Structure probing data (DMS and 2A3) for a 177-nucleotide construct. Reactivities are given for positions 27 through 126. DMS adducts were read by reverse transcription with MarathonRT. The 2A3 profile rests on 12,529 reads.
RNA sequence: GGGAACGACUCGAGUAGAGUCGAAAAAGGACGUGGCCGAUAGAUAUUCAGGAGAUCCUGCUCGCUGGCACCACGGGGAAAGACCUUGCCGAAUGUCAUGAACAUGUCUGCGAAUUCUGAAUCAGGUAUCCCAUUACUAGUUCGCUAGUAAUGGGAUAAAAGAAACAACAACAACAAC
Reactivity to DMS in 0.01 (KOAc 150mM, MgCl2 10mM, bicine 150mM(pH8.5), 24C), signal-to-noise 5, nucleotides 027 to 126: a060g000g000a060c060g040u000g020g020c040c030g000a090u040a060g010a120u010a060u030u010c060a060g030g010a080g000a070u010c020c010u000g000c040u010c060g000c060u010g010g020c060a060c050c020a120c060g000g000g000g000a080a090a060g000a050c060c030u000u010g000c010c040g000a060a020u010g020u010c030a100u020g000a070a060c080a030u010g010u000c030u000g000c050g000a060a100u010u030c040u000g000a070a080u010c100a050g010g020u010
Reactivity to 2A3 in 0.01 (KOAc 150mM, MgCl2 10mM, bicine 150mM(pH8.5), 24C), signal-to-noise 7, nucleotides 027 to 126: a000g080g000a020c040g010u020g050g030c020c020g020a020u120a080g070a030u080a120u150u120c040a030g020g040a050g030a050u060c000c000u010g030c010u000c040g050c040u040g020g020c020a020c020c000a020c020g020g000g000g040a060a110a020g060a030c010c010u020u070g040c000c020g030a050a030u070g020u050c030a060u140g040a080a020c020a040u080g070u080c020u040g030c020g050a060a060u130u020c030u100g060a080a080u080c000a040g040g050u030